The data come from the RNA Mapping Database (RMDB), library OK2TST. Structure probing data (2A3 and DMS) for a 177-nucleotide construct. The 2A3 profile rests on 3,888 reads. Conditions: 150 mM KOAc, 10 mM MgCl2 and 150 mM bicine (pH 8.5), 24 C. The DMS profile rests on 4,631 reads.

[RMDB]
RNA sequence: GGGAACGACUCGAGUAGAGUCGAAAACUAUAUGGGCCUGAAGCCCGGCACGAAAAUCACGGAUAUCGCGGUUGAUCGCGUCUUCAUCGGUUCGUGCACCAAUGGCCGCAUCGAAGACCUUCGCGCACAGUGGUGCAUUAUUCGUAAUGCACCACUGAAAAGAAACAACAACAACAAC
Reactivity to 2A3 in 0.01 (KOAc 150mM, MgCl2 10mM, bicine 150mM(pH8.5), 24C), signal-to-noise 3, nucleotides 027 to 126: c010u010a010u050a140u300g010g020g010c020c080u140g110a100a030g000c000c010c000g000g020c030a020c020g070a010a050a020a110u160c040a010c100g020g040a050u070a030u230c030g000c020g020g100u090u140g120a150u190c020g000c040g060u000c040u060u040c020a050u050c030g040g040u170u190c010g000u070g020c030a040c020c040a040a020u060g030g000c040c000g050c080a050u070c080g030a050a020g030a040c010c010u040u060c060g000c020g000c030a020
Reactivity to DMS in 0.01 (KOAc 150mM, MgCl2 10mM, bicine 150mM(pH8.5), 24C), signal-to-noise 4, nucleotides 027 to 126: c050u000a120u010a080u000g020g010g010c020c050u000g000a190a290g000c020c010c020g020g000c030a020c010g010a050a050a060a070u010c060a090c080g010g010a110u000a050u000c030g020c000g010g000u010u010g010a130u000c090g020c080g010u000c060u000u000c020a040u010c050g010g020u000u010c040g020u000g000c090a100c140c110a090a050u010g010g000c010c000g010c110a040u000c120g020a050a040g000a040c040c080u010u000c040g010c070g020c110a150